[RMDB]
RNA sequence: GGGAACGACUCGAGUAGAGUCGAAAAUCACCGGCCGUGUUCACUUCGCGACCGCCGAACCGCUGGAUUUCGUGGCACACGAUGGUGUCGUGGUUGUCCAACAGGUCGCGCCAUCGGUCGUCGCCGACUCCUUAAAGUCCUUCGGGACUUUAAGGAGAAAAGAAACAACAACAACAAC
Reactivity to 2A3 in 0.01 (KOAc 150mM, MgCl2 10mM, bicine 150mM(pH8.5), 24C), signal-to-noise 2, nucleotides 027 to 126: u100c050a070c040c000g000g000c000c020g050u050g030u160u140c100a080c120u060u030c020g000c000g020a020c010c020g050c030c000g000a040a040c040c010g040c070u060g060g000a050u000u000u120c040g030u100g020g040c020a000c000a020c070g210a130u210g180g070u090g040u030c020g010u070g020g130u030u070g010u050c010c010a040a060c030a090g060g040u040c010g020c000g010c010c000a110u070c010g020g020u010c020g040u050c030g050c050c030g050a020
Reactivity to DMS in 0.01 (KOAc 150mM, MgCl2 10mM, bicine 150mM(pH8.5), 24C), signal-to-noise 3, nucleotides 027 to 126: u010c140a170c150c000g020g000c010c040g020u000g030u000u000c150a110c160u030u000c030g010c020g010a030c010c040g000c090c070g010a070a060c150c080g010c060u000g000g010a080u000u030u000c050g010u000g030g000c000a070c000a040c140g020a050u010g010g000u010g030u000c010g060u000g000g000u000u000g000u020c050c060a040a030c080a150g020g010u000c010g000c060g010c160c070a070u000c000g020g010u010c090g020u000c080g010c030c040g000a180